[RMDB]
Structure probing data (DMS and 2A3) for a 207-nucleotide construct. DMS adducts were read by reverse transcription with MarathonRT. The data come from the RNA Mapping Database (RMDB), library OK3TST. The 2A3 profile rests on 1,223 reads.
RNA sequence: GGGAACGACUCGAGUAGAGUCGAAAAGAAAGAAAGAAAGAACAACACGUUUAUCGCCUGAAAAGAAGAAAAUUAUUCGUGAAAGAAGGAUUGGAAUUACUCAAAUAUUUGAUUCUUCAAUGCAUCCUUCCCAAGGUGGAGCCGCUCAAUCAUAGAACCAUUAGCGUGCAUUCGUGCACGCUAAUGGAAAAGAAACAACAACAACAAC
Reactivity to DMS in 0.01 (KOAc 150mM, MgCl2 10mM, bicine 150mM(pH8.5), 24C), signal-to-noise 1, nucleotides 027 to 156: g000a130a080a100g010a040a110a170g010a030a170a110g000a180a060c030a110a120c110a010c070g050u010u000u000a120u000c070g040c180c000u000g020a050a080a180a110g010a050a090g000a120a070a050a130u000u000a040u000u000c080g010u000g000a080a120a110g020a000a000g000g000a030u000u000g020g000a020a030u000u000a140c090u000c120a100a050a080u010a080u010u000u000g000a090u000u000c010u000u000c010a070a090u010g020c100a100u000c000c000u020u000c000c000c000a100a050g010g020u000g010g020a060g070c050c020g050c020u000c090a040a060u010c010a140u000a110g010a090a130
Reactivity to 2A3 in 0.01 (KOAc 150mM, MgCl2 10mM, bicine 150mM(pH8.5), 24C), signal-to-noise 2, nucleotides 027 to 156: g020a020a060a000g060a030a100a000g030a060a100a010g020a060a030c030a050a040c000a070c040g030u040u070u080a150u090c020g020c020c050u050g020a040a050a030a010g080a050a000g040a020a080a030a020u090u080a090u050u100c020g010u050g070a080a040a040g010a000a000g010g000a000u040u070g030g010a030a040u060u030a030c030u050c140a030a140a150u140a100u080u060u040g020a020u030u020c000u040u010c000a020a060u060g050c020a020u020c020c000u020u030c000c000c000a020a040g020g010u050g010g060a010g030c030c020g030c020u020c050a080a130u070c030a070u040a140g120a080a040
Values cover nucleotides 27 to 156. 2A3 adducts were read by reverse transcription with SuperScript II with manganese. Conditions: 150 mM KOAc, 10 mM MgCl2 and 150 mM bicine (pH 8.5), 24 C.